[RMDB]
RNA sequence: GGGAACGACUCGAGUAGAGUCGAAAACAUGUGCUUGGUAGAGAGCAAUUCAAUGCCCAUAACACAUUUGACACUUUUGUAAUCGGACCUGGUAACCGCUUUCCACAUGCAGCAAGUUUAGCUGUAGGAGUCGAUCGGACUUCGGUCCGAUCGACUCAAAAGAAACAACAACAACAAC
Reactivity to 2A3 in 0.01 (KOAc 150mM, MgCl2 10mM, bicine 150mM(pH8.5), 24C), signal-to-noise 2, nucleotides 027 to 126: c040a010u070g000u030g050c040u070u050g110g020u300a000g030a000g000a000g130c000a000a000u080u000c060a000a110u070g000c000c010c050a060u190a070a100c010a000c000a180u030u200u300g020a020c010a000c210u140u010u000u150g030u030a030a130u050c000g000g000a010c000c000u060g010g000u090a110a120c120c000g000c050u040u030u000c010c020a000c000a080u170g030c000a000g090c000a010a220g010u130u240u010a000g060c000u000g000u000a080g070